[RMDB]
This 177-nucleotide RNA was probed chemically with DMS and 2A3. The reactions ran in a buffer of 150 mM KOAc, 10 mM MgCl2 and 150 mM bicine (pH 8.5), at 24 C. For 2A3, 1,578 sequencing reads were counted. Source: RMDB library M2PK50, as collected in RNAgym. 2A3 is a SHAPE reagent: it acylates the 2'-hydroxyl of flexible nucleotides of all four kinds. For DMS, 1,080 sequencing reads were counted. Values cover nucleotides 27 to 126.

RNA sequence: GGGAACGACUCGAGUAGAGUCGAAAAGAAUUCUUGUUCGCAAGAAUUCAAAUAAGAAAGCUGAGCAGCUAUGAGGUCAUACAUCGUCAUAGCACAAAAUAAAAAGCUUUGUCUUCGGACAAAGCAACAAAUAGUGUCUCUUCGGAGACACUAUUUGAAAAGAAACAACAACAACAAC
Reactivity to DMS in 0.01 (KOAc 150mM, MgCl2 10mM, bicine 150mM(pH8.5), 24C), signal-to-noise 2, nucleotides 027 to 126: g000a050a010u000u000c000u000u010g000u000u030c210g030c020a020a010g000a000a000u010u000c000a020a120a110u000a060a140g010a070a150a150g000c080u000g000a080g020c120a090g000c000u000a020u000g010a060g000g000u010c170a130u020a150c230a040u010c000g020u010c010a000u000a020g030c000a140c220a060a030a090a080u000a080a110a070a120a020g000c000u000u000u010g000u000c000u000u000c230g000g010a010c000a010a000a000g010c020a080a060
Reactivity to 2A3 in 0.01 (KOAc 150mM, MgCl2 10mM, bicine 150mM(pH8.5), 24C), signal-to-noise 2, nucleotides 027 to 126: g000a010a010u000u030c000u010u020g020u010u060c160g030c060a000a000g000a000a000u000u000c010a000a020a050u070a030a010g210a190a090a030g060c160u090g090a020g070c110a000g050c090u000a000u040g000a010g020g000u080c100a070u120a300c090a060u130c040g230u030c030a010u020a010g040c030a010c020a010a070a020a010u260a010a090a010a000a020g010c000u020u010u000g000u000c010u000u040c220g010g010a000c000a000a000a000g010c020a010a000